[RMDB]
RNA sequence: GGGAACGACUCGAGUAGAGUCGAAAACAACAUUCGGCAAAAUACCUACACAUUCAGCCAUAAUAUUGAUGAUGCGGAUCAAUUCAUCACAUUUUGGGAAGCCUGCCAACAUACAGUCGUAUGCUUCGGUGAUAGUCCGCUUCGGCGGACUAUCACCAAAAGAAACAACAACAACAAC
Reactivity to 2A3 in 0.01 (KOAc 150mM, MgCl2 10mM, bicine 150mM(pH8.5), 24C), signal-to-noise 1, nucleotides 027 to 126: c060a000a000c000a130u080u110c000g000g000c030a000a000a170a170u100a010c000c000u090a000c050a000c000a070u030u030c000a030g080c020c000a000u020a150a000u000a060u030u080g010a050u000g030a000u090g000c100g070g220a210u280c070a010a040u050u110c000a020u000c000a000c020a000u100u090u010u010g000g000g020a000a000g010c000c000u000g000c030c100a130a000c040a130u080a000c000a000g120u000c000g000u000a000u020g080c080u110u120c090
Notes
The data come from the RNA Mapping Database (RMDB), library OK1LIB. An RNA of 177 nucleotides, treated with 2A3 and read out base by base. The 2A3 profile rests on 364 reads. Values are in units of 0.01, from 0 to 300, in steps of 10. The reactions ran in a buffer of 150 mM KOAc, 10 mM MgCl2 and 150 mM bicine (pH 8.5), at 24 C.